[RMDB]
RNA sequence: GGGAACGACUCGAGUAGAGUCGAAAACAGUGGAUAGUCGAUGCCCAAUCGUUAAAAGAAGUGAUAAUACUUUUAACGUGUAGGAAGGCGUGAAGGUAACAUUGAAGAUUCAGUGUGAACUGGAUUGUAGAAUCGUAUGUUUCGACAUACGAUUCUAAAAAGAAACAACAACAACAAC
Reactivity to 2A3 in 0.01 (KOAc 150mM, MgCl2 10mM, bicine 150mM(pH8.5), 24C), signal-to-noise 5, nucleotides 027 to 126: c020a010g040u050g070g050a090u090a070g060u060c030g060a120u100g070c010c000c000a000a060u040c010g010u000u000a010a010a010a010g090a060a020g090u070g230a090u120a270a060u140a150c000u010u020u000u000a000a000c010g000u020g030u040a030g050g050a140a010g040g000c040g030u050g040a030a020g040g000u070a040a010c030a050u060u080g050a090a030g070a150u080u020c000a010g030u010g010u020g100a030a030c000u010g020g010a040u020u090g050
Reactivity to DMS in 0.01 (KOAc 150mM, MgCl2 10mM, bicine 150mM(pH8.5), 24C), signal-to-noise 8, nucleotides 027 to 126: c050a050g020u010g010g000a090u020a060g000u010c030g020a070u020g020c020c010c030a160a110u020c000g000u000u000a010a000a010a010g000a130a080g010u010g010a120u050a130a110u030a060c010u000u000u000u000a000a010c000g000u010g000u050a100g010g010a090a100g000g000c050g030u010g000a110a060g000g010u010a070a080c080a050u010u000g000a090a110g010a040u000u000c010a000g010u000g000u020g000a100a030c010u000g000g000a050u000u010g010
Notes:
Source: RMDB libraries RFM100 and RFMREP, as collected in RNAgym. Structure probing data (2A3 and DMS) for a 177-nucleotide construct. For 2A3 the reverse transcriptase was SuperScript II with manganese. Reactivities are rounded to 0.1 and cut off at 0 and 3.